[RMDB]
RNA sequence: GGGAACGACUCGAGUAGAGUCGAAAACUUGCCCGUGGCCUGGAAGAAGGCGACUCCGGCUUCAAUCAGAUGACCGGCGCAGUAAAGUUCAUGGCACUCCGCCAGAUUGCUCCAGCGUUCUUCGGGCCAGCCAAGUAUGGUUCGCCAUACUUGGCUGAAAAGAAACAACAACAACAAC
Reactivity to 2A3 in 0.01 (KOAc 150mM, MgCl2 10mM, bicine 150mM(pH8.5), 24C), signal-to-noise 2, nucleotides 027 to 126: c000u000u140g040c030c010c020g040u020g000g000c020c030u060g050g050a020a040g030a020a010g120g000c000g020a030c070u050c020c010g020g020c000u050u000c030a130a300u190c070a110g030a140u000g060a140c000c000g040g040c000g000c020a030g020u140a060a100a000g030u060u060c070a120u130g040g000c030a040c130u170c050c090g010c000c000a000g000a100u060u090g010c040u010c020c070a000g000c060g150u080u020c020u060u030c000g030g000g000c000
Reactivity to DMS in 0.01 (KOAc 150mM, MgCl2 10mM, bicine 150mM(pH8.5), 24C), signal-to-noise 2, nucleotides 027 to 126: c160u000u010g010c030c000c010g020u000g020g000c000c010u000g000g030a030a070g020a050a060g020g000c010g020a180c180u000c010c000g020g020c000u010u000c020a130a160u000c230a180g000a210u000g000a130c030c000g000g000c210g000c080a070g010u000a090a080a090g020u000u000c100a090u000g000g010c020a140c250u000c230c070g030c010c000a040g000a100u010u000g020c040u000c050c080a040g000c080g010u000u000c020u010u000c000g020g110g010c110